[RMDB]
RNA sequence: GGGAACGACUCGAGUAGAGUCGAAAAGAUAUGGACCGCGUGUGACGCGAAGAACUCGGAAACGAGGGAGCGUACACCGGUCCUAAGUCAAAAGUAGAUCAUAUUCCUUCGGGAAUAUGAUCUACAAUCUUUCAUUGAUGUUCGCAUCAAUGAAAGAAAAAGAAACAACAACAACAAC
Reactivity to DMS in 0.01 (KOAc 150mM, MgCl2 10mM, bicine 150mM(pH8.5), 24C), signal-to-noise 4, nucleotides 027 to 126: g010a050u010a300u010g010g000a000c000c000g020c300g030u000g010u010g020a020c000g000c000g000a070a150g020a110a140c000u000c000g000g010a120a130a130c000g000a030g000g020g000a090g020c000g000u000a020c000a000c000c010g010g020u000c000c010u000a010a060g000u010c040a080a080a090a130g010u000a000g000a010u000c000a000u000a010u010u000c000c000u000u010c220g020g000g000a010a000u000a000u010g000a000u000c000u000a000c000a030a060
Reactivity to 2A3 in 0.01 (KOAc 150mM, MgCl2 10mM, bicine 150mM(pH8.5), 24C), signal-to-noise 2, nucleotides 027 to 126: g010a020u040a060u150g010g000a000c000c010g040c240g020u010g010u080g220a070c000g080c020g180a240a040g010a050a010c010u000c000g020g040a090a080a040c000g000a010g000g000g020a030g010c010g000u000a000c000a000c000c000g000g020u010c010c000u000a000a000g010u000c010a000a000a090a040g000u000a000g000a000u000c000a000u010a000u000u010c010c010u010u110c300g010g000g000a000a000u000a000u000g000a000u000c000u000a000c000a010a000